[RMDB]
RNA sequence: GGGAACGACUCGAGUAGAGUCGAAAACGCUCAAUAGGGACCUAAUCAAAGAGCGAGAUACAGAACCGGAAGUUCAGGCCAACGCGGUGACAGCAGUCGAAUUCCUUAAACUGGUCCGCACUACGCGAAAUUUAAAUUUAUUCGUAAAUUUAAAUUUAAAAGAAACAACAACAACAAC
Reactivity to DMS in 0.01 (KOAc 150mM, MgCl2 10mM, bicine 150mM(pH8.5), 24C), signal-to-noise 9, nucleotides 027 to 126: c060g000c010u000c020a090a110u020a100g000g010g010a070c040c030u010a080a100u040c120a080a090a110g010a040g010c020g020a100g000a110u030a060c110a070g010a120a100c050c030g000g000a080a100g000u010u010c040a070g010g010c020c050a040a070c070g010c030g000g020u010g000a070c100a080g010c050a050g010u010c040g000a100a100u020u000c020c000u000u030a040a070a090c100u010g000g010u000c030c020g010c090a060c130u010a070c110g010c060g000
Reactivity to 2A3 in 0.01 (KOAc 150mM, MgCl2 10mM, bicine 150mM(pH8.5), 24C), signal-to-noise 9, nucleotides 027 to 126: c010g010c010u020c010a070a150u110a180g060g010g050a060c010c020u090a090a080u170c090a140a090a020g020a010g000c010g020a020g010a020u150a030c060a020g060a070a030c020c020g030g030a050a030g020u070u080c040a030g010g070c010c010a030a020c030g010c010g040g020u050g030a030c030a050g050c010a000g040u040c010g030a040a090u060u020c000c000u070u140a050a070a060c040u040g000g020u020c020c000g020c010a060c070u180a050c080g050c020g050

This 177-nucleotide RNA was probed chemically with DMS and 2A3. Source: RMDB library OK1LIB, as collected in RNAgym. DMS adducts were read by reverse transcription with MarathonRT. 2A3 adducts were read by reverse transcription with SuperScript II with manganese. The DMS profile rests on 21,818 reads.